[RMDB]
RNA sequence: GGGAACGACUCGAGUAGAGUCGAAAAAGUUCUGGCCGUUGCUCUGCGAGGGCUGAUACCAGUCGGUGUAGAAACUGGAUUGGCCGCCCACGGGCAUGAUCACCGACAACCCUGACUGGUAGUACUCGCAACCUAAAUAUUUCGAUAUUUAGGUUGCAAAAGAAACAACAACAACAAC
Reactivity to 2A3 in 0.01 (KOAc 150mM, MgCl2 10mM, bicine 150mM(pH8.5), 24C), signal-to-noise 9, nucleotides 027 to 126: a000g080u090u050c050u070g060g010c040c030g120u040u060g030c040u060c080u220g030c030g040a050g010g040g000c030u040g030a020u030a100c000c000a000g010u010c010g040g000u090g020u110a080g120a130a110a030c050u070g030g010a060u030u050g040g010c020c020g050c020c010c000a060c100g020g000g020c050a050u130g040a070u050c040a030c090c010g060a060c050a040a070c010c000c020u050g020a030c000u010g040g000u020a040g050u040a070c020u010c070
Reactivity to DMS in 0.01 (KOAc 150mM, MgCl2 10mM, bicine 150mM(pH8.5), 24C), signal-to-noise 5, nucleotides 027 to 126: a080g020u000u010c020u010g010g020c020c050g000u000u000g010c060u020c090u030g030c070g000a040g000g000g010c040u000g000a130u000a040c000c010a020g000u000c000g010g000u010g000u010a090g000a080a080a110c130u020g000g010a060u010u010g010g020c050c070g000c040c040c050a090c110g010g000g010c030a070u010g010a070u000c030a080c050c060g000a200c260a050a050c030c020c010u010g000a030c010u010g000g000u000a010g010u020a070c100u010c100
Chemical mapping of a 177-nucleotide RNA with 2A3 and DMS. 2A3 adducts were read by reverse transcription with SuperScript II with manganese. The RNA was probed in 150 mM KOAc, 10 mM MgCl2 and 150 mM bicine (pH 8.5) at 24 C.